[RMDB]
RNA sequence: GGGAACGACUCGAGUAGAGUCGAAAACUAGGGGGUAUUCCGGUGUGGGAUACUUAGUAAUAUGCAACGCUAAUUGCAUAAGAUUGUAGGACGGAAUUUACAAUCUUGGUUUUUCAAACCUGAAACUUGUGGUAGUACGCGUUCGCGCGUACUACAAGAAUUCUCGUGGAUUCGUCCACGAGAAUUCAAAAGAAACAACAACAACAAC
Reactivity to DMS in 0.01 (KOAc 150mM, MgCl2 10mM, bicine 150mM(pH8.5), 24C), signal-to-noise 1, nucleotides 027 to 156: c000u010a080g030g000g000g030g030u000a020u000u000c000c040g000g090u010g060u000g030g010g040a030u000a000c000u000u000a040g020u000a060a180u000a080u000g030c030a000a060c040g070c190u010a060a130u000u000g010c000a070u000a020a030g010a040u000u000g000u000a050g060g030a210c040g020g000a130a300u010u000u000a010c010a010a030u000c020u020u000g020g000u000u010u010u000u010c120a100a060a090c040c010u000g000a180a040a070c130u010u000g020u000g010g000u000a010g030u000a010c000g030c030g020u000u010c300g040c040g030c000g060u030a000c000u010a000c000a030a110
Reactivity to 2A3 in 0.01 (KOAc 150mM, MgCl2 10mM, bicine 150mM(pH8.5), 24C), signal-to-noise 2, nucleotides 027 to 156: c040u080a060g020g020g040g000g000u010a000u040u010c020c010g190g070u230g070u200g070g000g010a000u020a010c000u030u040a040g000u040a010a100u030a010u110g000c010a020a020c060g030c250u150a110a050u040u030g000c000a000u000a020a030g010a010u000u010g000u010a020g050g040a030c080g080g060a070a040u090u070u030a020c020a000a000u000c010u030u060g000g040u020u020u020u050u170c070a050a030a040c010c020u050g030a100a060a090c080u080u170g030u060g160g010u000a000g000u000a000c000g010c000g000u020u050c160g010c000g000c000g090u000a000c000u000a000c000a000a000